Chemical mapping of a 207-nucleotide RNA with 2A3.

RNA sequence: GGGAACGACUCGAGUAGAGUCGAAAAAAUUUUACUGAGCAACUUCAACAUGGCUGGCACUAAACAGAGUUAAAAAAUAAGCAAGAUUCUUCCUUUGAGGAAUAUAUUAUCUACUGGGAAGAUCAACAGAUAAUAAUAUUAUGCAACAGUGAAUAUACCAUACGUAGUAGUUCGCUACUACGUAUGGAAAAGAAACAACAACAACAAC
Reactivity to 2A3 in 0.01 (KOAc 150mM, MgCl2 10mM, bicine 150mM(pH8.5), 24C), signal-to-noise 1, nucleotides 027 to 156: a000a000u070u110u090u090a000c000u010g000a010g060c000a160a130c000u100u050c010a010a010c030a100u170g010g000c010u000g040g000c030a010c090u140a000a020a100c040a000g050a000g040u010u000a170a110a000a000a060a100u120a070a000g010c070a030a070g010a080u240u070c020u000u020c000c000u060u000u180g040a030g000g000a020a000u090a030u000a080u160u060a040u080c010u030a060c040u030g020g000g100a090a020g010a070u020c000a000a100c030a010g030a030u030a060a010u030a200a030u080a080u200u110a040u150g030c050a070a080c000a040g030u010g100a030a010u100a030u080a120

2A3 adducts were read by reverse transcription with SuperScript II with manganese.